[RMDB]
RNA sequence: GGGAACGACUCGAGUAGAGUCGAAAAUUCGGUGAUCCUGCCUCUCCUUGUCGGUGAAUCCUCCCCUGAGAGGCCUCUUCCUAGGUCCGGAGUCUACCUCCAUCUGGUCCGUCCGGGCCCUCUUCGCACCUAAUUUCUACUUCGGUAGAAAUUAGGUAAAAGAAACAACAACAACAAC
Reactivity to DMS in 0.01 (KOAc 150mM, MgCl2 10mM, bicine 150mM(pH8.5), 24C), signal-to-noise 2, nucleotides 027 to 126: u000u000c040g020g010u010g000a100u000c030c040u000g000c040c010u000c030u000c020c120u000u010g020u000c050g010g020u000g000a110a130u000c030c030u000c020c000c030c030u000g000a020g010a070g010g000c000c080u000c060u000u000c030c030u000a080g010g020u000c030c040g010g010a050g010u020c070u010a080c040c020u000c070c090a090u010c140u010g010g000u010c070c050g000u000c030c040g000g010g000c020c000c110u000c050u010u000c100g020c160
Reactivity to 2A3 in 0.01 (KOAc 150mM, MgCl2 10mM, bicine 150mM(pH8.5), 24C), signal-to-noise 2, nucleotides 027 to 126: u070u030c060g040g030u070g040a040u030c000c000u040g020c030c000u030c000u020c030c040u060u100g110u110c070g060g130u090g150a130a130u130c000c030u010c010c020c000c000u010g030a060g000a020g030g020c000c010u000c010u040u000c000c000u020a070g030g010u000c010c010g000g000a030g030u040c050u080a050c010c000u010c030c010a100u080c080u030g020g000u000c010c010g080u000c010c000g010g010g010c020c000c010u010c010u020u000c000g040c000